Chemical mapping of a 207-nucleotide RNA with 2A3 and DMS. Source: RMDB library OK3TST, as collected in RNAgym. Reactivities are rounded to 0.1 and cut off at 0 and 3.
[RMDB]
RNA sequence: GGGAACGACUCGAGUAGAGUCGAAAAAUUGAGCCUCAUAGUAGCUGGCUCAGGUAGGAGUUGGCCGUGAUGACAACUUCUCUGCAGUUUGCCCUGCGUGAAUCUCCAGAUGAACUUUUGUGCCAUUUAAACUUUCGUGAUCUCCUGCUAUUUAACAAUAAAUUAUCAGGUUCGCCUGAUAAUUUAUAAAAGAAACAACAACAACAAC
Reactivity to 2A3 in 0.01 (KOAc 150mM, MgCl2 10mM, bicine 150mM(pH8.5), 24C), signal-to-noise 6, nucleotides 027 to 156: a000u050u040g000a000g010c000c010u060c030a080u100a150g150u070a040g080c080u050g000g000c000u000c010a010g010g020u040a010g000g020a020g000u030u030g040g000c050c040g070u110g060a130u130g030a030c010a030a020c000u020u000c030u000c020u050g010c010a020g010u040u100u070g040c020c020c010u050g030c050g020u020g040a050a060u060c020u030c060c020a040g010a110u100g040a120a100c040u070u100u140u170g100u120g030c000c010a080u080u140u160a100a110a060c030u090u170u170c080g050u060g040a070u020c010u010c030c000u020g020c050u050a110u220u180u110a090a010c020a080
Reactivity to DMS in 0.01 (KOAc 150mM, MgCl2 10mM, bicine 150mM(pH8.5), 24C), signal-to-noise 3, nucleotides 027 to 156: a140u010u020g010a040g010c000c000u000c030a180u000a220g000u010a160g020c050u010g010g040c000u000c020a020g010g020u000a040g000g020a060g020u000u010g020g030c050c050g020u000g010a100u020g010a040c010a020a060c080u010u000c010u010c050u000g020c060a070g020u000u010u000g010c050c050c120u000g040c010g020u000g000a060a080u000c020u000c020c020a100g010a110u020g000a060a070c060u000u000u000u010g030u010g030c010c010a080u010u010u000a050a070a070c050u000u000u000c050g020u000g010a100u000c020u000c030c020u010g020c010u000a090u000u000u000a080a110c060a110